An RNA of 177 nucleotides, treated with DMS and 2A3 and read out base by base.
The data come from the RNA Mapping Database (RMDB), library TTRDEL.
Reactivities are given for positions 27 through 126.
Values are in units of 0.01, from 0 to 300, in steps of 10.
For DMS the reverse transcriptase was MarathonRT.
The DMS profile rests on 3,884 reads.
RNA sequence: GGGAACGACUCGAGUAGAGUCGAAAAGAUAUGGAAUUGCGAACUUUGGAGAGGGAUCGGAAACGAUCCUCCCCACCUCUUUGGGAGGUAUAAUUCCUAAGUCAAAAUCACGGGUUCGCCCGUGAAACUAAACAUACCACUUCGGUGGUAUGUUUAGAAAAGAAACAACAACAACAAC
Reactivity to DMS in 0.01 (KOAc 150mM, MgCl2 10mM, bicine 150mM(pH8.5), 24C), signal-to-noise 3, nucleotides 027 to 126: g000a030u000a090u010g010g000a020a010u000u000g010c190g000a080a090c060u010u010u010g040g010a020g000a020g000g010g000a020u000c000g010g000a020a030a060c010g010a010u000c000c000u000c010c010c000c010a210c030c000u000c300u000u010u010g020g000g000a060g010g010u000a090u000a030a010u000u000c000c010u010a020a090g000u000c020a070a050a130a080u000c000a010c000g000g000g010u000u020c300g010c010c000c000g000u000g000a000a050a200
Reactivity to 2A3 in 0.01 (KOAc 150mM, MgCl2 10mM, bicine 150mM(pH8.5), 24C), signal-to-noise 4, nucleotides 027 to 126: g030a000u080a010u130g000g000a010a040u030u040g050c090g090a170a080c080u190u250u300g080g000a070g020a040g040g190g080a040u000c010g000g000a010a020a020c010g000a000u000c000c000u020c000c000c000c000a060c000c010u150c180u200u270u300g110g010g000a030g040g000u080a040u070a100a030u020u010c000c000u030a060a030g030u010c000a000a000a020a300u030c010a000c010g000g000g030u030u050c240g110c040c000c020g000u000g010a000a000a000